[RMDB]
RNA sequence: GGGAACGACUCGAGUAGAGUCGAAAAUCCUAAGUCGGACUAGUACUCGCUAAGACAGUUCGAAGAGACUAUUUUAUGUUGUAGAAACUCGGAAACGAGUUUCGCAGAUAACAUAAAAUAGUCUCUUCGAAUCGAGCGAGUAAUAGUCCGAUAUGGACGUUACGCUUAAGUUCGCUUAAGCGUAACGAAAAGAAACAACAACAACAAC
Reactivity to DMS in 0.01 (KOAc 150mM, MgCl2 10mM, bicine 150mM(pH8.5), 24C), signal-to-noise 2, nucleotides 027 to 156: u000c000c020u010a040a300g000u000c000g020g000a030c000u020a010g000u000a010c000u000c000g080c000u000a240a140g020a230c300a060g020u000u010c000g020a010a010g000a040g000a040c000u000a000u000u000u000u000a000u000g000u020u000g030u000a220g010a000a020a000c000u000c000g010g020a160a130a290c010g030a020g020u000u000u000c000g030c140a150g030a040u020a010a020c000a020u000a000a000a020a020u000a000g000u000c000u000c000u000u010c000g000a010a000u000c140g000a070g020c000g010a020g020u000a010a020u000a010g000u000c000c000g040a000u010a030u000g020g010a300
Reactivity to 2A3 in 0.01 (KOAc 150mM, MgCl2 10mM, bicine 150mM(pH8.5), 24C), signal-to-noise 2, nucleotides 027 to 156: u010c010c000u030a120a000g030u010c000g000g000a000c000u000a000g000u000a000c000u000c000g020c010u040a090a070g070a130c050a060g020u000u000c000g010a010a000g010a000g000a000c000u000a000u010u000u010u000a010u000g010u000u020g030u030a090g010a000a000a000c000u000c010g030g040a080a090a060c010g000a020g000u000u000u000c000g010c000a010g000a020u060a000a000c000a000u010a000a000a000a000u000a000g000u000c000u000c000u010u000c000g000a000a000u000c000g000a000g000c010g000a000g000u000a000a000u000a000g000u000c000c000g000a000u000a000u010g040g020a010
Chemical mapping of a 207-nucleotide RNA with DMS and 2A3. The RNA was probed in 150 mM KOAc, 10 mM MgCl2 and 150 mM bicine (pH 8.5) at 24 C. For DMS the reverse transcriptase was MarathonRT. For 2A3 the reverse transcriptase was SuperScript II with manganese. For DMS, 3,234 sequencing reads were counted.